[RMDB]
RNA sequence: GGGAACGACUCGAGUAGAGUCGAAAAGGGACCCAAAGGACCGAGCGGAAGAAAGUUGGUAUUGGACCGUUCAAUCUGGGCCAAUUACCAUUCAAGAAAUGAGACAACAACGAGGGAGGACCGGACGGACGUGUGCAGGAACUCACUAUGCAGCACCCUCCUAACAUCGGUUCGCCGAUGUUAGGAGAAAAGAAACAACAACAACAAC
Reactivity to 2A3 in 0.01 (KOAc 150mM, MgCl2 10mM, bicine 150mM(pH8.5), 24C), signal-to-noise 1, nucleotides 027 to 156: g000g010g110a070c000c000c000a090a020a010g050g010a000c030c030g070a000g020c040g010g100a020a000g050a050a080a050g080u120u040g000g000u000a000u000u000g010g010a030c000c060g020u030u080c070a140a170u010c150u240g020g000g000c000c000a000a000u010u010a010c000c000a000u040u090c060a040a040g100a050a090a060u160g030a060g010a020c090a050a000c000a000a000c150g030a050g030g000g000a050g000g030a060c130c130g010g050a040c020g000g000a020c020g060u050g010u010g090c070a060g080g070a070a000c010u010c030a010c020u090a020u090g040c070a030g000c000a040c000c000

An RNA of 207 nucleotides, treated with 2A3 and read out base by base. It was measured as part of the RMDB library OK3TST. For 2A3 the reverse transcriptase was SuperScript II with manganese.